[RMDB]
RNA sequence: GGGAACGACUCGAGUAGAGUCGAAAAUGUCUAGCUGACGGAUCUACGGUACACUCCAUGCUCUAGCACUAGCGUCAUGUAGGAUCUCUAGACGAUCCAUGGUACUCCAUGAGUCACGCGAGUACCGCUAACGCUUGUGGUUCGCCACAAGCGUUAGAAAAGAAACAACAACAACAAC
Reactivity to DMS in 0.01 (KOAc 150mM, MgCl2 10mM, bicine 150mM(pH8.5), 24C), signal-to-noise 2, nucleotides 027 to 126: u000g010u000c030u000a070g000c300u000g020a110c110g030g000a050u010c010u000a070c040g000g000u000a020c050a080c030u000c070c060a130u020g020c040u000c100u000a080g000c060a070c050u010a030g000c020g010u000c040a080u010g020u000a040g000g010a070u000c010u000c070u020a060g000a060c120g000a040u000c000c000a060u010g010g020u000a020c030u020c010c010a060u020g000a180g000u020c120a080c120g030c100g000a050g000u010a000c010c030g010
Reactivity to 2A3 in 0.01 (KOAc 150mM, MgCl2 10mM, bicine 150mM(pH8.5), 24C), signal-to-noise 2, nucleotides 027 to 126: u130g000u000c030u020a040g020c130u080g090a090c090g040g020a050u000c010u050a020c040g060g010u050a030c040a010c040u010c110c020a030u040g010c020u060c040u160a050g040c040a040c130u070a000g040c020g040u040c030a020u130g060u090a060g050g050a050u000c040u000c010u060a040g010a090c030g010a020u030c010c000a060u090g020g000u010a010c010u010c040c010a080u200g090a090g200u210c060a040c180g090c050g010a000g010u000a010c000c000g010